[RMDB]
RNA sequence: GGGAACGACUCGAGUAGAGUCGAAAAAGGGCCGCGGUGCUCUGGAGUAGAGGCUUCUUGCUUCGAAACACCAUCGAUCGUCCCUUCUUCUUUUACCUUCUCCUGGCUCUUCGAGUGAGACGCGACCGGUGGCAUCACCUCUCGGUUCGUCUUCCAACUGAGAGAGUAGGUUCGCCUACUCUCUCAGAAAAGAAACAACAACAACAAC
Reactivity to 2A3 in 0.01 (KOAc 150mM, MgCl2 10mM, bicine 150mM(pH8.5), 24C), signal-to-noise 1, nucleotides 027 to 156: a020g020g000g030c020c020g000c030g040g000u030g000c010u020c000u000g000g010a020g000u010a020g000a010g010g040c040u120u060c060u300u300g000c010u010u000c070g010a000a000a000c010a030c140c000a000u000c000g070a300u000c020g040u050c020c000c000u000u020c000u010u000c010u010u080u030u080a080c030c050u120u170c040u070c050c040u030g050g000c000u000c000u070u060c020g010a010g020u050g020a010g000a000c010g010c040g040a020c000c020g000g000u000g000g050c090a130u090c060a110c040c010u030c040u130c010g000g000u030u040c000g010u010c000u060u010c010c000a050a110